RNA sequence: GGGAACGACUCGAGUAGAGUCGAAAAGAGUGUGGAUCUGAGUAGGAGACUGUGGUGCGCUGCUUUACAGACGUAGCCCAGUUUAAAAAACGUCUAUGCCCCUACAGGGUCGCGGUGGGCCGCACCCACCGAACCAGCGUUUCGACGCUGGUUCGGUAAAAGAAACAACAACAACAAC
Reactivity to DMS in 0.01 (KOAc 150mM, MgCl2 10mM, bicine 150mM(pH8.5), 24C), signal-to-noise 2, nucleotides 027 to 126: g020a070g030u000g010u000g000g000a080u000c020u000g010a150g000u000a040g030g000a070g010a090c010u000g030u020g010g020u020g000c000g000c030u000g000c260u030u000u050a140c120a020g000a160c020g010u000a000g010c030c030c010a070g000u010u000u010a000a070a090a000a000a080c150g000u020c210u040a110u010g000c030c010c000c000u000a050c130a200g020g000g020u000c100g060c070g010g000u000g010g020g020c000c060g020c050a150c000c010c010
Reactivity to 2A3 in 0.01 (KOAc 150mM, MgCl2 10mM, bicine 150mM(pH8.5), 24C), signal-to-noise 2, nucleotides 027 to 126: g050a000g000u060g000u060g000g000a060u020c060u020g000a020g080u000a030g010g030a020g040a000c020u000g130u190g120g000u010g060c000g000c000u010g000c000u100u070u150a100c020a090g090a090c020g000u000a000g120c000c000c000a020g030u130u190u150a050a070a000a000a000a000c000g020u000c020u080a100u120g010c000c000c010c000u020a020c060a100g030g000g040u150c090g000c000g030g090u140g020g020g040c000c000g060c030a000c000c060c020